[RMDB]
RNA sequence: GGGAACGACUCGAGUAGAGUCGAAAAAGCCACAUCACCCUCAGCGAAGAGGAGAGUACCAGUCAAUGGCAGCGCCGAGACUACAAGUGCUUUGGCCCCAACCAGACCAAGGUUGACUGGGACGCCGCUCCCGCCAUCCAGGAGCUGCCAGUCCAGAAGAGUAGAUACAGUUCGCUGUAUCUACUCUAAAAGAAACAACAACAACAAC
Reactivity to 2A3 in 0.01 (KOAc 150mM, MgCl2 10mM, bicine 150mM(pH8.5), 24C), signal-to-noise 3, nucleotides 027 to 156: a010g050c040c000a080c050a100u120c030a110c040c000c010u000c020a100g020c100g190a150a100g010a070g070g020a020g000a000g040u050a040c030c040a000g030u050c050a020a170u080g010g050c060a060g060c020g010c110c010g020a030g030a040c020u040a060c110a240a010g050u080g100c010u040u050u080g030g010c000c010c000c010a020a060c010c000a030g090a090c050c040a120a070g090g000u040u030g030a080c030u030g030g000g000a020c010g010c010c000g010c030u000c020c020c010g010c070c010a060u060c020c040a000g020g000a010g000c010u000g020c010c030a020g060u020c000c040a010g050a030
Reactivity to DMS in 0.01 (KOAc 150mM, MgCl2 10mM, bicine 150mM(pH8.5), 24C), signal-to-noise 2, nucleotides 027 to 156: a060g000c060c020a140c080a090u000c040a130c030c000c010u010c060a170g030c080g030a170a050g010a110g020g000a050g010a250g000u010a080c030c010a090g030u000c030a090a130u000g030g000c030a070g020c040g040c030c070g030a190g000a130c050u000a110c080a120a070g020u020g020c010u010u000u010g000g010c020c010c000c000a100a080c130c100a230g000a060c010c020a010a060g000g030u000u010g020a040c040u000g030g030g000a020c040g000c050c030g000c030u000c000c000c020g000c030c070a090u010c090c020a110g000g000a080g020c000u000g020c000c010a100g000u000c020c030a070g000a300
Structure probing data (2A3 and DMS) for a 207-nucleotide construct. For 2A3, 1,932 sequencing reads were counted. For 2A3 the reverse transcriptase was SuperScript II with manganese. The RNA was probed in 150 mM KOAc, 10 mM MgCl2 and 150 mM bicine (pH 8.5) at 24 C. For DMS, 3,455 sequencing reads were counted.